[RMDB]
RNA sequence: GGGAACGACUCGAGUAGAGUCGAAAAAUUUUAGGGUCUACUACUGGAGGACUAGUCUUAAGACAGUGGGACAAAAGUUCUUGUGAUUUUCACCCCUUAAUCAAUAUGCACAUGUUGACUACCGAUGUGUAAGGCAGUCAAGAGAAGCAGAGAAGAAUGACUAUUUAUGAUUCGUCAUAAAUAGUCAAAAAGAAACAACAACAACAAC
Reactivity to 2A3 in 0.01 (KOAc 150mM, MgCl2 10mM, bicine 150mM(pH8.5), 24C), signal-to-noise 5, nucleotides 027 to 156: a000u150u180u080u100a030g030g000g000u020c040u060a060c030u020a030c060u100g090g010a020g030g000a010c010u030a050g010u000c010u070u080a120a080g090a080c030a070g080u100g020g010g010a010c020a030a170a020a010g000u020u020c000u060u080g040u020g050a090u040u050u100u140c030a050c010c000c000c000u030u070a040a050u080c030a030a070u040a020u220g010c010a060c010a070u040g040u120u030g020a010c000u000a020c010c010g040a060u080g060u010g040u170a030a030g000g000c020a000g000u010c010a010a010g020a000g010a100a030g010c010a000g030a000g020a190a030g050a050a080
Reactivity to DMS in 0.01 (KOAc 150mM, MgCl2 10mM, bicine 150mM(pH8.5), 24C), signal-to-noise 4, nucleotides 027 to 156: a090u000u000u000u000a060g030g020g020u000c010u010a050c030u010a080c060u000g030g010a090g020g010a080c040u010a230g000u010c030u000u010a080a140g000a100c080a100g020u010g020g030g020a120c060a040a060a060a120g000u000u000c020u000u000g020u000g000a130u000u000u010u000c030a080c010c010c020c030u000u000a040a070u010c050a060a100u010a110u010g020c060a060c090a190u000g020u000u000g020a050c000u010a020c010c000g000a120u000g030u010g020u010a090a190g000g020c020a030g030u010c010a020a050g010a120g000a120a170g010c020a050g000a120g000a050a090g000a100a180